[RMDB]
RNA sequence: GGGAACGACUCGAGUAGAGUCGAAAAUUGAGAGUAAAGCACGCUCCAACCUAUCGCCGUCGCCAAGGUCAGCAAAGCUAUCGUGUGCUUGCCGGUUAACCUGCCGCGAUCCGACCUAGCUGACUAAACCGUGCAUAGGAUUCGUCCUAUGCACGGUAAAAGAAACAACAACAACAAC
Reactivity to DMS in 0.01 (KOAc 150mM, MgCl2 10mM, bicine 150mM(pH8.5), 24C), signal-to-noise 2, nucleotides 027 to 126: u000u010g000a110g040a050g020u020a000a090a090g020c030a060c110g010c010u010c070c030a040a140c030c000u010a070u000c040g010c000c030g010u000c050g000c030c080a070a100g020g010u010c010a020g000c070a050a100a130g020c070u000a040u000c020g010u030g000u030g000c010u010u000g000c020c020g000g000u010u000a050a080c070c080u000g000c040c020g020c050g020a050u000c140c020g000a060c070c020u000a300g010c030u060g000a050c050u000a060a150
Reactivity to 2A3 in 0.01 (KOAc 150mM, MgCl2 10mM, bicine 150mM(pH8.5), 24C), signal-to-noise 2, nucleotides 027 to 126: u120u110g070a090g010a010g030u090a090a100a000g050c010a020c080g020c010u000c020c010a020a060c030c000u080a090u160c030g040c100c010g040u030c010g030c030c020a120a030g070g000u030c010a000g030c010a030a040a020g000c000u050a010u050c020g030u010g040u040g050c050u050u010g070c010c030g040g000u050u120a070a120c000c010u010g000c000c000g000c010g010a010u050c080c020g060a130c020c000u010a020g000c000u010g010a010c020u040a190a040
This 177-nucleotide RNA was probed chemically with DMS and 2A3. For DMS the reverse transcriptase was MarathonRT. For 2A3, 1,842 sequencing reads were counted.